[RMDB]
Chemical mapping of a 207-nucleotide RNA with DMS and 2A3. The DMS profile rests on 5,284 reads. The data come from the RNA Mapping Database (RMDB), library M2RFPK. For DMS the reverse transcriptase was MarathonRT.

RNA sequence: GGGAACGACUCGAGUAGAGUCGAAAAUGUGGAAGUCCUGCUCGGGGCGGAAGAAUUAAAACCAUUCGAGCUAGUCAAUGCGUGGCGUGUCUCUCCGCAGCGUGUUGGCGAAUGUAAAGAGUGACUAUUGACCACGCAACGUUCGCGUUGCGUGGAAGUAAGGAGUCAAGUUCGCUUGACUCCUUACAAAAGAAACAACAACAACAAC
Reactivity to DMS in 0.01 (KOAc 150mM, MgCl2 10mM, bicine 150mM(pH8.5), 24C), signal-to-noise 2, nucleotides 027 to 156: u000g020u010g000g000a180a160g010u000c010c020u010g030c040u000c010g010g010g030g000c020g020g010a110a120g030a110a150u000u020a080a090a180a180c030c010a150u000u010c010g000a110g020c010u000a090g030u000c010a020a030u000g010c000g030u000g020g070c000g020u010g000u000c070u000c020u000c050c020g020c020a110g010c020g000u000g020u010u000g020g000c000g010a060a040u000g010u000a050a040a060g000a070g010u000g000a060c020u010a130u010u000g010a220c010c000a030c000g000c010a010a030c000g000u000u010c300g030c040g040u000u000g010c010g030u000g000g010a010a030
Reactivity to 2A3 in 0.01 (KOAc 150mM, MgCl2 10mM, bicine 150mM(pH8.5), 24C), signal-to-noise 7, nucleotides 027 to 156: u220g020u080g080g040a080a030g020u030c000c020u030g000c010u000c000g010g000g020g000c070g050g020a050a030g100a000a040u290u260a080a040a020a060c060c030a020u130u140c020g000a010g000c000u000a010g000u000c010a010a010u010g000c010g020u040g180g000c000g000u020g000u000c010u000c000u000c010c000g020c010a030g000c010g000u030g000u010u000g000g000c010g000a010a000u070g050u120a020a020a010g010a000g000u010g000a000c010u040a110u050u200g070a040c000c000a000c000g000c000a000a000c000g030u040u050c200g000c010g110u000u000g000c000g000u000g000g000a000a000